RNA sequence: GGGAACGACUCGAGUAGAGUCGAAAACGCACCACAGCACGCAGAGGGCACACACCAGCAGCACACGGCCAGUCAUCAUCAUCGCCAUCACUCCUGUCACUUGCGUGCAGCCUUCAGCACAAACUAAAUCAUAUCCCUCAUUCGUGAGGGAUAUGAUAAAAGAAACAACAACAACAAC
Reactivity to DMS in 0.01 (KOAc 150mM, MgCl2 10mM, bicine 150mM(pH8.5), 24C), signal-to-noise 6, nucleotides 027 to 126: c120g010c050a110c050c020a090c100a060g010c030a050c040g030c040a070g010a130g020g000g000c020a080c100a090c070a080c060c050a080g000c060a060g010c050a060c120a080c080g000g010c040c030a080g000u010c040a040u010c060a040u010c040a050u000c050g020c020c010a030u000c060a070c060u000c020c030u000g010u010c060a060c070u010u000g000c060g000u000g000c010a050g010c040c020u000u000c050a060g000c030a060c070a060a050a100c130u000a050a080
Reactivity to 2A3 in 0.01 (KOAc 150mM, MgCl2 10mM, bicine 150mM(pH8.5), 24C), signal-to-noise 2, nucleotides 027 to 126: c030g030c010a050c020c000a050c030a010g050c030a000c040g030c030a020g030a080g080g040g020c030a030c000a010c000a020c030c020a020g010c030a010g020c020a010c010a020c050g040g000c020c010a030g050u050c000a060u000c000a010u010c000a010u060c060g010c030c000a030u050c020a020c060u040c020c020u060g030u070c030a020c120u050u090g020c020g020u020g010c000a000g020c010c000u080u110c040a040g030c040a020c020a060a100a030c080u180a150a120
The record gives the reactivity of an RNA of 177 nucleotides to DMS and 2A3. The 2A3 profile rests on 10,212 reads. The reactions ran in a buffer of 150 mM KOAc, 10 mM MgCl2 and 150 mM bicine (pH 8.5), at 24 C. Source: RMDB library OK2TRN, as collected in RNAgym. For DMS, 6,199 sequencing reads were counted.